[RMDB]
Source: RMDB library OK2TRN, as collected in RNAgym. Structure probing data (DMS and 2A3) for a 177-nucleotide construct. Values cover nucleotides 27 to 126. For DMS the reverse transcriptase was MarathonRT. The reactions ran in a buffer of 150 mM KOAc, 10 mM MgCl2 and 150 mM bicine (pH 8.5), at 24 C.
RNA sequence: GGGAACGACUCGAGUAGAGUCGAAAAGGGAAGGCAGGCUUCUACACUGUGGGCUCAUUGGCAUUUGCAGAGUUCUUUGGCGACAGCCUUAUUGUCCUCAUAGUGAUGUGGCAGGAGCUGAUGGCAGAUCUACUUCAUGCUUCGGCAUGAAGUAGAUAAAAGAAACAACAACAACAAC
Reactivity to DMS in 0.01 (KOAc 150mM, MgCl2 10mM, bicine 150mM(pH8.5), 24C), signal-to-noise 4, nucleotides 027 to 126: g010g020g000a060a080g010g010c040a110g020g010c040u000u010c030u000a170c060a030c070u010g030u020g010g000g000c080u000c060a050u000u020g010g000c030a170u000u000u000g020c040a110g010a150g010u000u000c110u000u010u010g000g010c100g010a080c230a110g010c040c020u000u010a040u000u000g000u000c170c020u000c020a060u020a070g010u000g020a110u000g030u000g020g010c080a070g010g000a050g010c030u000g010a080u010g000g010c060a090g010
Reactivity to 2A3 in 0.01 (KOAc 150mM, MgCl2 10mM, bicine 150mM(pH8.5), 24C), signal-to-noise 2, nucleotides 027 to 126: g030g010g030a030a020g040g000c050a020g010g010c000u020u060c010u060a050c020a010c040u020g000u020g020g000g000c020u000c030a070u100u130g030g000c030a050u030u060u200g040c000a020g030a030g170u170u060c000u090u180u150g070g010c010g000a060c050a020g000c010c000u030u090a190u100u070g010u000c000c020u040c030a050u090a050g060u080g030a110u090g040u100g070g000c030a030g020g010a000g000c010u040g030a080u090g030g000c040a040g010